[RMDB]
This 177-nucleotide RNA was probed chemically with 2A3 and DMS. Values cover nucleotides 27 to 126. The DMS profile rests on 3,915 reads. 2A3 is a SHAPE reagent: it acylates the 2'-hydroxyl of flexible nucleotides of all four kinds. DMS adducts were read by reverse transcription with MarathonRT. Source: RMDB library OK2TST, as collected in RNAgym. For 2A3 the reverse transcriptase was SuperScript II with manganese.
RNA sequence: GGGAACGACUCGAGUAGAGUCGAAAACCGGCCGUGUGACCGGUCCUCAUCUGCACUAUGAGUUAAUCGUGCGUGGUCGUCCUGUCAACGCCAUGAAAGCCAAUAUCCCGAUGGCAAGUUCAGUGCAAAAUACCACUGGGUUCGCCCAGUGGUAUUUAAAAGAAACAACAACAACAAC
Reactivity to 2A3 in 0.01 (KOAc 150mM, MgCl2 10mM, bicine 150mM(pH8.5), 24C), signal-to-noise 2, nucleotides 027 to 126: c000c000g000g000c040c030g270u170g090u120g100a110c010c020g000g000u010c000c040u030c010a070u010c010u050g020c000a010c030u010a040u080g050a040g130u090u200a120a000u080c050g040u080g030c040g030u020g040g010u090c060g000u050c020c010u080g030u090c000a020a010c030g020c020c010a020u100g030a030a080a010g030c030c010a040a010u050a050u090c000c000c000g020a080u020g000g020c040a030a020g030u080u150c040a010g040u000g080c120a050
Reactivity to DMS in 0.01 (KOAc 150mM, MgCl2 10mM, bicine 150mM(pH8.5), 24C), signal-to-noise 4, nucleotides 027 to 126: c020c010g000g000c030c040g010u010g020u030g010a070c070c010g000g000u010c220c010u000c020a030u000c080u010g000c030a040c020u010a080u000g000a060g010u000u000a090a070u000c090g030u000g010c030g020u000g010g030u000c020g020u000c050c040u010g000u010c190a090a050c050g010c040c020a020u010g010a080a100a130g000c010c030a030a110u010a090u000c010c010c010g020a120u000g010g020c010a100a120g010u010u000c100a040g020u010g000c050a040